Annotation: Chemical mapping of a 177-nucleotide RNA with 2A3. The reactions ran in a buffer of 150 mM KOAc, 10 mM MgCl2 and 150 mM bicine (pH 8.5), at 24 C.
RNA sequence: GGGAACGACUCGAGUAGAGUCGAAAAAUGCGCGUGAGGGUGAGGAUGUGCGAGGGGGACGAGGGGGGUGCGGUUAACGCCGCCUGGGAUCUGCGCAGGGGCGGGCGGUUCAGUUUGGCCGCCGUACGCGCUGCGGUAGAUUCGUCUACCGCAGCGCAAAAGAAACAACAACAACAAC
Reactivity to 2A3 in 0.01 (KOAc 150mM, MgCl2 10mM, bicine 150mM(pH8.5), 24C), signal-to-noise 1, nucleotides 027 to 126: a000u040g000c000g000c000g000u030g010a140g000g000g140u240g090a210g210g150a250u050g110u080g060c150g000a130g000g040g000g000g120a220c220g000a180g130g070g000g000g000g000u090g000c020g080g020u030u300a000a000c010g000c000c000g000c000c080u010g010g000g090a070u000c000u000g120c000g000c000a010g000g000g000g000c020g070g030g030c010g020g040u120u250c010a090g000u000u060u200g040g000c000c000g000c040c000g000u140a060c070